The record gives the reactivity of an RNA of 207 nucleotides to DMS and 2A3. Source: RMDB library M2RFPK, as collected in RNAgym. The 2A3 profile rests on 7,515 reads. Conditions: 150 mM KOAc, 10 mM MgCl2 and 150 mM bicine (pH 8.5), 24 C. The DMS profile rests on 9,377 reads.

[RMDB]
RNA sequence: GGGAACGACUCGAGUAGAGUCGAAAAGCUUCCUCUUGGCGCGGAGGUUUAACUGCGCUCGCUCCCCAUAUCGGUGUGGGCGCACUGGAUUUACAAAUUAAAGUCCUUUAGGGAGCGGAAAGGGACAAAAACUUGCACGUGUUCGCACGUGCAAGAAUCACAAUAACAAGUUCGCUUGUUAUUGUGAAAAAGAAACAACAACAACAAC
Reactivity to DMS in 0.01 (KOAc 150mM, MgCl2 10mM, bicine 150mM(pH8.5), 24C), signal-to-noise 3, nucleotides 027 to 156: g020c050u010u000c010c000u010c020u000u010g000g020c030g070c050g020g030a150g040g000u000u000u000a060a110c020u000g020c000g010c000u000c000g010c010u000c020c000c030c090a180u000a100u010c060g020g000u000g040u000g020g010g030c090g030c010a030c040u000g020g010a150u000u000u000a300c110a080a110a150u000u010a060a080a070g010u010c010c020u000u000u010a070g010g000g000a050g010c010g000g010a050a050a070g000g030g010a080c050a070a040a090a160a120c010u000u000g000c000a010c000g030u000g010u000u010c300g020c010a010c000g010u000g000c000a000a000g000a030a100
Reactivity to 2A3 in 0.01 (KOAc 150mM, MgCl2 10mM, bicine 150mM(pH8.5), 24C), signal-to-noise 6, nucleotides 027 to 156: g040c030u100u040c000c000u030c010u010u020g010g000c030g010c020g010g020a010g020g040u060u100u090a040a020c030u050g010c000g000c000u000c000g000c000u040c000c010c000c020a070u110a080u240c060g000g000u020g010u040g030g110g000c050g010c030a010c010u060g080g020a050u050u100u160a110c080a040a070a040u090u090a060a070a030g010u010c000c000u020u040u050a030g010g000g000a010g010c020g000g010a070a050a020g060g010g010a020c080a020a110a020a010a040c010u000u000g000c010a000c000g000u010g020u060u050c160g010c120a000c000g000u000g000c000a000a000g000a000a000